[RMDB]
RNA sequence: GGGAACGACUCGAGUAGAGUCGAAAAGAUAUGGAGUCCUCUGGAGAUCAAGCCAUCGGAAACGAUGGCUGAUCGAUGAAAGAGGGACUCCUAAGUCAAAAGCUAUGGCCCUUCGGGGCCAUAGCAACCAUACUAGUCUGUUCGCAGACUAGUAUGGAAAAGAAACAACAACAACAAC
Reactivity to DMS in 0.01 (KOAc 150mM, MgCl2 10mM, bicine 150mM(pH8.5), 24C), signal-to-noise 3, nucleotides 027 to 126: g000a030u000a110u000g000g000a020g010u010c000c000u000c000u000g000g010a030g000a010u000c000a030a160g000c010c000a010u000c000g010g000a020a020a060c000g020a000u000g000g000c000u000g000a010u000c000g010a110u000g000a090a210a020g000a010g010g020g010a010c000u000c000c000u000a000a050g000u000c000a110a110a090a130g000c000u000a000u000g000g010c000c000c000u000u010c210g020g020g000g020c000c000a000u000a000g000c000a030a030
Reactivity to 2A3 in 0.01 (KOAc 150mM, MgCl2 10mM, bicine 150mM(pH8.5), 24C), signal-to-noise 1, nucleotides 027 to 126: g010a000u030a010u070g000g010a010g000u010c000c000u000c010u030g000g020a020g000a010u010c050a080a050g000c010c000a000u000c000g010g000a030a010a000c000g010a000u000g020g000c000u000g000a000u010c000g040a130u020g000a000a010a000g010a030g060g010g010a020c000u010c000c000u000a020a000g000u010c000a000a020a130a140g000c000u000a010u010g000g020c020c000c000u030u100c300g040g020g010g010c010c010a000u000a000g010c000a000a010
An RNA of 177 nucleotides, treated with DMS and 2A3 and read out base by base. For 2A3, 8,583 sequencing reads were counted. DMS adducts were read by reverse transcription with MarathonRT. Reactivities are given for positions 27 through 126.